[RMDB]
RNA sequence: GGGAACGACUCGAGUAGAGUCGAAAAGAGGUUGUCCAUUUGAUAAUUUUAACAAACAAUGUAAGUUUAAAAUUGAGGCUAAGGUAACAUGAAAAAGCAGGGAAUCUCAAACUUUAUUCCAUAUAUACUAAUGUCCACCUUUCGAGGUGGACAUUAGAAAAGAAACAACAACAACAAC
Reactivity to DMS in 0.01 (KOAc 150mM, MgCl2 10mM, bicine 150mM(pH8.5), 24C), signal-to-noise 1, nucleotides 027 to 126: g000a040g000g000u000u000g000u020c000c000a210u010u020u040g040a150u020a020a000u000u000u000u000a030a060c040a180a090a160c160a220a090u050g000u020a130a190g000u010u000u000a040a000a000a000u000u000g000a030g000g000c070u020a000a000g040g040u020a120a090c210a220u000g000a070a050a070a060a040g050c060a070g050g000g050a040a040u000c000u020c000a120a070a030c080u050u040u040a090u000u000c000c010a000u060a040u020a010u000a260
Reactivity to 2A3 in 0.01 (KOAc 150mM, MgCl2 10mM, bicine 150mM(pH8.5), 24C), signal-to-noise 1, nucleotides 027 to 126: g010a000g000g020u070u000g080u040c000c030a050u000u030u020g230a150u270a090a060u020u020u020u020a000a020c000a100a110a020c010a030a030u160g120u160a300a000g050u010u000u070a000a000a000a000u000u090g130a050g050g000c010u050a000a050g060g070u210a100a000c000a000u070g020a060a000a150a150a000g000c040a050g000g000g000a010a050u020c010u000c070a030a150a230c110u280u240u170a100u120u000c000c000a000u050a000u000a000u020a170